[RMDB]
RNA sequence: GGGAACGACUCGAGUAGAGUCGAAAAUCCUGGCAUCCCCCUUGGGAACUCAUACCUUGGGGGAGGACAACCCGGGGAACUGAAACAUCUAAGUACCCGGAGGAGAAGAAAUCAACUGCGAGAUUCCCUAACUCUCUGAUUUCGAUCAGAGAGUUAGAAAAGAAACAACAACAACAAC
Reactivity to 2A3 in 0.01 (KOAc 150mM, MgCl2 10mM, bicine 150mM(pH8.5), 24C), signal-to-noise 8, nucleotides 027 to 126: u000c000c000u000g040g050c020a190u020c000c000c000c010c010u010u000g000g030g020a090a070c070u080c120a090u170a210c000c010u000u000g000g000g020g000g000a000g000g010a020c030a030a070c020c000c000g000g000g000g010a030a010c020u040g030a120a170a080c050a140u110c010u040a050a000g000u010a010c010c000c000g000g000a020g010g030a060g010a120a020g050a030a120a020u130c060a040a100c030u090g050c090g020a050g010a090u020u040c020c000
Reactivity to DMS in 0.01 (KOAc 150mM, MgCl2 10mM, bicine 150mM(pH8.5), 24C), signal-to-noise 5, nucleotides 027 to 126: u000c010c000u000g010g020c070a210u020c000c000c000c000c010u000u000g000g000g000a150a110c300u060c190a060u010a260c000c010u000u010g000g010g010g000g000a010g000g010a100c110a150a200c200c000c000g010g010g000g020a140a090c100u000g000a080a140a170c210a080u020c060u000a070a020g000u000a170c030c010c000g000g020a050g000g000a080g000a120a120g000a050a090a040u000c050a070a070c040u000g000c010g010a070g010a230u000u000c020c020